[RMDB]
RNA sequence: GGGAACGACUCGAGUAGAGUCGAAAACAUCCAGUGUUCGCACUGGAUGAGAGGAAUGUGGAUCGGCAAACUACAUACCAAAAGCUGAGCUCGAAAGAGCAUCGAUUUCGUCGUUCGCGACGAAAAAUCGAAUCAUCUAGUUCGCUAGAUGAUUCGAAAAAGAAACAACAACAACAAC
Reactivity to 2A3 in 0.01 (KOAc 150mM, MgCl2 10mM, bicine 150mM(pH8.5), 24C), signal-to-noise 4, nucleotides 027 to 126: c010a000u000c000c000a000g000u000g050u060u090c210g030c070a000c010u000g010g000a000u000g000a010g010a010g010g040a050a030u030g010u050g010g050a130u120c110g140g070c160a070a080a050c020u050a010c020a020u060a060c020c000a080a080a000a010g080c130u110g050a010g030c000u010c010g030a070a040a030g010a000g000c010a140u050c010g050a050u020u010u020c010g000u000c010g010u040u040c270g010c010g070a000c010g010a030a010a000a010a010
Reactivity to DMS in 0.01 (KOAc 150mM, MgCl2 10mM, bicine 150mM(pH8.5), 24C), signal-to-noise 3, nucleotides 027 to 126: c000a000u000c000c000a010g030u000g010u000u020c230g010c000a010c000u000g000g010a010u000g000a100g010a120g000g000a090a010u000g020u000g000g000a070u010c050g000g010c160a080a080a060c040u000a010c020a030u010a130c020c000a070a040a120a100g020c140u010g000a100g000c000u000c000g010a090a080a140g000a010g010c010a050u010c060g000a200u010u000u000c000g010u000c000g000u000u020c210g010c030g000a010c010g010a010a000a010a100a150